[RMDB]
RNA sequence: GGGAACGACUCGAGUAGAGUCGAAAACACGAAACGCACCGGCGCCGGGAGGGCCGCCGUGACACUUCCUCCCGGACGGUCAGCAGGCGAGCGCGGCGCCGACACUCAGUUCGCCUCCGCCGCGCCGCUGCCGUCACCGAUUCGUCGGUGACGGCAGAAAAGAAACAACAACAACAAC
Reactivity to 2A3 in 0.01 (KOAc 150mM, MgCl2 10mM, bicine 150mM(pH8.5), 24C), signal-to-noise 3, nucleotides 027 to 126: c060a010c040g120a090a090a030c090g020c030a020c020c000g060g000c120g110c050c010g000g020g000a000g000g030g030c010c010g020c050c060g080u070g050a030c060a040c050u140u050c000c000u000c000c000c010g020g000a010c010g020g000u050c040a030g060c030a010g080g020c000g020a050g010c010g000c010g000g000c000g010c010c050g010a010c030a060c050u300c050a070g060u220u020c010g020c010c020u040c010c010g000c000c000g000c010g000c000c000g000
Reactivity to DMS in 0.01 (KOAc 150mM, MgCl2 10mM, bicine 150mM(pH8.5), 24C), signal-to-noise 3, nucleotides 027 to 126: c090a140c100g000a050a070a060c110g020c140a080c000c030g020g000c080g000c000c000g000g010g000a000g010g000g000c230c090g010c040c070g000u010g000a120c110a140c180u010u040c000c000u010c000c000c000g000g010a080c040g050g000u010c050a160g000c030a090g000g010c000g010a120g020c000g020c000g000g000c000g000c100c000g000a020c040a120c160u000c290a100g000u030u010c020g010c090c070u020c220c030g000c000c000g010c000g000c000c030g020
Structure probing data (2A3 and DMS) for a 177-nucleotide construct. Values cover nucleotides 27 to 126. It was measured as part of the RMDB library OK1LIB. For DMS, 3,690 sequencing reads were counted. Conditions: 150 mM KOAc, 10 mM MgCl2 and 150 mM bicine (pH 8.5), 24 C.